[RMDB]
RNA sequence: GGGAACGACUCGAGUAGAGUCGAAAAGGCAGGACCUGGCACCCCUCCUCUUCAGCAGGAGGGAUGUGGCCACCAGUCAUGAGCCAAUGAUGGGCUGCACUCUGCUCCACGCCCUCCGGGACGUGGGCUACGAUGGCAUUUUCGAAUGCCAUCGUAGAAAAGAAACAACAACAACAAC
Reactivity to 2A3 in 0.01 (KOAc 150mM, MgCl2 10mM, bicine 150mM(pH8.5), 24C), signal-to-noise 4, nucleotides 027 to 126: g030g000c010a000g010g050a080c000c030u020g020g000c010a010c000c010c010c010u010c000c010u060c020u300u230c100a120g000c050a000g050g010a000g000g000g000a010u120g020u010g110g090c010c000a010c020c000a010g020u020c010a060u130g090a030g090c070c040a020a040u160g040a070u070g050g020g030c020u040g030c010a040c060u090c050u070g040c020u000c000c000a010c010g010c010c000c020u030c070c120g060g000g010a030c000g000u010g010g010g000
Reactivity to DMS in 0.01 (KOAc 150mM, MgCl2 10mM, bicine 150mM(pH8.5), 24C), signal-to-noise 5, nucleotides 027 to 126: g010g010c020a050g010g010a120c040c060u000g000g020c020a040c030c010c000c000u000c010c000u000c030u010u010c300a120g020c210a020g010g000a010g010g010g000a000u000g020u000g010g000c020c020a060c070c110a140g010u000c030a080u000g000a090g010c070c070a080a080u000g000a090u000g000g010g000c020u000g010c060a080c100u000c060u000g000c040u000c010c010a010c010g000c020c010c000u010c190c160g000g000g020a010c000g020u010g010g000g000

This 177-nucleotide RNA was probed chemically with 2A3 and DMS. For DMS, 7,282 sequencing reads were counted. Conditions: 150 mM KOAc, 10 mM MgCl2 and 150 mM bicine (pH 8.5), 24 C.